Chemical mapping of a 207-nucleotide RNA with DMS and 2A3. It was measured as part of the RMDB library M2RFPK. Values cover nucleotides 27 to 156. DMS adducts were read by reverse transcription with MarathonRT. The 2A3 profile rests on 1,617 reads.

RNA sequence: GGGAACGACUCGAGUAGAGUCGAAAAGAAAUUACGUUUCCUUUACACUUCUCAAACCGGGAUCAAGAGAAGCAAAGCAUCCCUCAUAUCCACGAUGGAGGGUGUUGUGGAGUAUACUGUACCAAAAAGAGCGAACACGGCUUCGGCCGUGUUCGAAGUAGAAACAUCACUUCGGUGAUGUUUCUACAAAAGAAACAACAACAACAAC
Reactivity to DMS in 0.01 (KOAc 150mM, MgCl2 10mM, bicine 150mM(pH8.5), 24C), signal-to-noise 2, nucleotides 027 to 156: g000a090a060a090u000u010a100c090g050u000u020u000c030c000u000u000u010a140c040a040c050u010u010c000u000c000a010a150a210c040c030g010g050g020a140u010c110a120a270g020a040g010a050a030g030c000a050a090a150g000c070a070u000c000c000c010u010c030a110u000a080u000c060c100a140c170g000a040u000g020g010a010g010g050g000u000g050u000u010g010u000g020g000a130g010u000a060u010a070c110u010g000u020a180c060c020a080a060a080a080a110g000a170g000c010g010a010a000c010a010c040g000g030c020u000u010c290g010g010c030c000g020u000g010u000u010c000g010a000a030
Reactivity to 2A3 in 0.01 (KOAc 150mM, MgCl2 10mM, bicine 150mM(pH8.5), 24C), signal-to-noise 3, nucleotides 027 to 156: g060a020a100a010u250u130a030c050g010u000u000u030c000c000u050u040u040a010c030a020c000u050u030c020u000c020a140a210a180c060c080g070g020g030a090u130c100a160a060g030a010g010a030a020g040c080a100a000a030g010c010a060u090c000c060c000u000c030a080u080a040u120c090c040a040c080g060a020u090g070g000a020g030g030g000u010g000u030u040g000u010g000g010a030g030u020a010u010a070c060u080g040u060a080c000c050a040a050a010a020a020g120a020g090c020g000a010a000c000a000c000g010g020c000u050u040c110g070g000c000c000g030u000g000u000u000c000g000a000a000